[RMDB]
RNA sequence: GGGAACGACUCGAGUAGAGUCGAAAAAAGCAUGUCUCUCUAUUGUCUCUCUAUUCAGAACUUAGUAUGGUGAUGGAUGGAUAGAGAGACAUUCCUGCAUCUGUCAUCCAUCACCAUAAAAACAAAACAUUUAAGGUAGUUUCGACUACCUUAAAUGAAAAGAAACAACAACAACAAC
Reactivity to 2A3 in 0.01 (KOAc 150mM, MgCl2 10mM, bicine 150mM(pH8.5), 24C), signal-to-noise 3, nucleotides 027 to 126: a000a000g130c090a060u080g060u030c020u000c000u000c010u050a050u080u100g130u030c020u020c000u020c020u080a100u130u090c050a030g060a160a070c030u090u090a080g050u070a170u010g010g000u000g000a000u010g000g000a000u020g040g000a000u000a010g000a000g000a000g000a000c000a000u000u000c000c010u020g030c020a080u050c050u200g280u170c020a010u000c000c000a010u010c000a000c000c000a000u000a000a020a010a000a000c030a010a090a000a020
Reactivity to DMS in 0.01 (KOAc 150mM, MgCl2 10mM, bicine 150mM(pH8.5), 24C), signal-to-noise 6, nucleotides 027 to 126: a080a060g010c200a070u000g000u010c010u000c020u010c030u000a070u000u000g000u000c050u000c030u000c030u010a060u000u000c100a120g010a110a120c210u000u010a100g010u000a010u000g000g010u000g010a010u000g010g010a020u000g000g000a010u000a010g010a010g000a020g010a000c010a020u000u000c010c010u000g020c150a090u010c120u010g010u000c050a040u010c010c000a010u000c000a010c010c000a010u000a010a060a060a050a040c150a060a050a090a130